[RMDB]
RNA sequence: GGGAACGACUCGAGUAGAGUCGAAAAGGAUCUGAGUACUUAUAAGUGCGAAGUGAGUGAGGGUCUUACGAGCACGAAUUACAGCCCUCUAUUAAGUAUCGAAGAUCGGCCGGAGAUCGAGAUACAACUAUUAACCGGCGACUGUACGAAGAUCCGACAUCAUGCUAUACUUCGGUAUAGCAUGAUGAAAAGAAACAACAACAACAAC
Reactivity to 2A3 in 0.01 (KOAc 150mM, MgCl2 10mM, bicine 150mM(pH8.5), 24C), signal-to-noise 6, nucleotides 027 to 156: g000g000a000u000c010u010g010a010g010u000a010c020u100u150a140u090a300a040g010u000g000c010g030a090a020g010u010g010a010g010u120g010a010g000g010g020u110c000u020u010a010c010g000a010g010c020a010c040g100a120a080u170u110a090c050a080g060c010c010c000u010c010u020a120u110u170a160a030g010u000a000u010c010g030a000a020g000a020u000c000g040g000c020c010g000g000a090g000a010u010c000g010a010g000a100u010a020c010a030a010c020u070a000u240u050a130a010c010c000g010g010c010g050a080c120u080g000u000a000c000g000a010a000g000a000u000c000c000g000a000
Reactivity to DMS in 0.01 (KOAc 150mM, MgCl2 10mM, bicine 150mM(pH8.5), 24C), signal-to-noise 2, nucleotides 027 to 156: g020g010a010u000c010u000g000a300g030u000a050c010u000u000a130u010a030a090g020u000g010c010g070a130a180g000u020g050a110g000u010g010a110g010g020g020u000c070u000u010a060c070g000a230g030c040a090c020g010a110a080u010u000a100c070a220g010c000c010c000u000c050u000a080u000u020a090a120g030u000a050u000c010g000a170a190g020a030u000c000g000g020c070c090g050g020a220g040a030u000c020g010a300g020a080u000a030c010a100a110c150u010a000u010u010a100a130c010c000g000g030c010g020a120c060u010g040u010a030c050g010a220a040g040a050u020c030c020g010a080
Structure probing data (2A3 and DMS) for a 207-nucleotide construct. 2A3 adducts were read by reverse transcription with SuperScript II with manganese. It was measured as part of the RMDB library OK3TST. For 2A3, 4,878 sequencing reads were counted. The RNA was probed in 150 mM KOAc, 10 mM MgCl2 and 150 mM bicine (pH 8.5) at 24 C.